Conditions: 150 mM KOAc, 10 mM MgCl2 and 150 mM bicine (pH 8.5), 24 C. An RNA of 177 nucleotides, treated with DMS and 2A3 and read out base by base.
[RMDB]
RNA sequence: GGGAACGACUCGAGUAGAGUCGAAAAUACCCAGAAAAAUGGCACUGCAGAGCUGAUGGGCCAUGUACCUAUCCAAAAUGAGAUCCCAUCUUGCACACUGUGCUAAUUUGAGAUUCUCAUGCCUCCUUUUUACAUAAUCAUUCGUGAUUAUGUAAAAAAAAGAAACAACAACAACAAC
Reactivity to DMS in 0.01 (KOAc 150mM, MgCl2 10mM, bicine 150mM(pH8.5), 24C), signal-to-noise 9, nucleotides 027 to 126: u030a130c010c000c010a190g010a030a050a060a080a050u010g000g010c030a050c060u000g010c110a110g010a110g020c070u000g000a040u000g000g000g020c080c030a040u010g010u020a090c080c050u010a070u020c070c120a060a040a100a030u010g000a040g000a050u000c000c010c000a010u000c030u000u000g000c000a030c020a170c160u030g000u000g010c000u020a020a030u010u000u000g000a060g000a040u010u010c010u000c010a030u000g010c040c020u010c030c030u000
Reactivity to 2A3 in 0.01 (KOAc 150mM, MgCl2 10mM, bicine 150mM(pH8.5), 24C), signal-to-noise 9, nucleotides 027 to 126: u100a020c010c000c010a010g130a020a130a010a010a010u100g020g000c030a010c070u090g020c080a040g010a040g120c040u050g010a050u040g020g020g000c020c010a030u060g040u050a090c010c020u070a090u150c040c040a090a080a050a060u060g010a050g010a090u050c010c000c000a000u010c000u020u080g010c010a020c010a030c090u140g000u010g010c010u040a040a070u020u020u040g050a050g010a040u220u030c020u010c020a030u080g030c010c010u060c000c020u020